Structure probing data (DMS and 2A3) for a 207-nucleotide construct.
For DMS, 9,097 sequencing reads were counted.
For DMS the reverse transcriptase was MarathonRT.

[RMDB]
RNA sequence: GGGAACGACUCGAGUAGAGUCGAAAAACUGUACAUAAAGCUAACUUUAUUUUGUCAACUUUACUUAGGACAGUGACACUCAUCAGCAAUCACCAUCGCCUUUUCCUAGGAUCAGCUGGUGGUGAUGUUAAUGGUGUCGGAACCAUUGGUGAUAUGAACAGGAGAAUACAUUCGUGUAUUCUCCUGUAAAAGAAACAACAACAACAAC
Reactivity to DMS in 0.01 (KOAc 150mM, MgCl2 10mM, bicine 150mM(pH8.5), 24C), signal-to-noise 3, nucleotides 027 to 156: a080c020u010g020u020a070c050a110u000a010a020a030g000c010u010a020a030c020u000u000u000a180u030u020u000u010g010u010c000a030a000c010u000u000u000a010c070u000u000a160g020g000a060c010a040g000u000g020a040c010a000c020u010c020a040u000c030a040g030c020a050a070u000c010a030c010c020a030u000c000g020c120c020u000u000u000u000c040c080u010a190g110g020a050u010c140a040g040c020u010g060g030u000g000g010u010g010a060u000g010u000u000a010a030u000g010g020u000g010u010c020g000g010a090a090c030c010a300u010u000g010g000u010g000a160u000a100u010g010a150
Reactivity to 2A3 in 0.01 (KOAc 150mM, MgCl2 10mM, bicine 150mM(pH8.5), 24C), signal-to-noise 4, nucleotides 027 to 156: a000c030u030g030u080a050c010a070u090a050a060a030g030c030u070a070a090c030u120u150u160a120u210u300u190u110g090u070c080a090a040c040u010u090u120a050c030u110u160a040g080g000a020c010a060g000u010g070a000c000a000c010u160c020a030u010c010a010g020c000a040a300u000c000a010c000c000a000u010c010g050c030c030u000u050u050u040c030c030u060a110g000g100a060u030c050a000g010c020u080g000g020u000g000g000u000g010a000u000g000u010u030a020a010u010g020g000u000g000u000c010g010g010a020a010c020c000a070u050u110g060g040u120g040a090u000a060u090g070a050
It was measured as part of the RMDB library OK3TST. The 2A3 profile rests on 3,100 reads. The reactions ran in a buffer of 150 mM KOAc, 10 mM MgCl2 and 150 mM bicine (pH 8.5), at 24 C.